[RMDB]
RNA sequence: GGGAACGACUCGAGUAGAGUCGAAAAGCUUUGCACAGUGCAUGGCACAUGGUGAGUCUUCGGUGCGGUGCCACCCAAACCAGCAAAUCAGAGAGUUGUCUCUGUGGUGAGAGAGAAGUCAGAAGCCGGAGAAUUUGCAGGUGAUGCUGACCAGCCAAUUUAAAAUCCUAUUCGUAGGAUUUUAAAUAAAAGAAACAACAACAACAAC
Reactivity to 2A3 in 0.01 (KOAc 150mM, MgCl2 10mM, bicine 150mM(pH8.5), 24C), signal-to-noise 4, nucleotides 027 to 156: g010c020u110u120u150g030c040a060c030a110g070u080g070c040a080u060g090g000c030a050c040a130u130g060g000u030g030a070g020u050c030u060u090c110g000g010u050g020c020g030g060u060g020c010c010a030c020c020c010a050a070a070c030c000a000g050c060a040a050a130u090c010a000g000a000g010a010g030u060u040g050u040c010u020c000u010g020u030g030g000u060g000a090g000a000g000a010g020a150a030g010u010c010a020g030a090a000g030c030c030g050g040a090g060a110a130u150u110u180g030c030a030g020g010u050g010a040u100g000c030u020g030a040c000c000a000g030c030c000a020
Reactivity to DMS in 0.01 (KOAc 150mM, MgCl2 10mM, bicine 150mM(pH8.5), 24C), signal-to-noise 4, nucleotides 027 to 156: g010c030u000u000u000g030c010a090c070a160g020u010g030c040a090u000g010g030c030a080c040a090u010g020g030u010g000a120g020u000c040u000u000c050g030g030u000g010c040g000g020u000g020c030c030a090c020c020c020a060a110a090c030c010a100g020c050a080a090a120u010c020a040g010a050g000a090g020u000u000g010u000c010u000c010u000g020u010g020g030u000g010a180g010a130g010a120g000a070a100g010u000c020a100g010a100a300g030c030c030g010g010a090g000a070a120u000u000u000g030c040a070g000g020u010g010a110u010g020c010u000g010a110c020c020a160g030c040c030a050
The record gives the reactivity of an RNA of 207 nucleotides to 2A3 and DMS.
For DMS, 10,567 sequencing reads were counted.
The data come from the RNA Mapping Database (RMDB), library OK3TST.
The reactions ran in a buffer of 150 mM KOAc, 10 mM MgCl2 and 150 mM bicine (pH 8.5), at 24 C.
For 2A3 the reverse transcriptase was SuperScript II with manganese.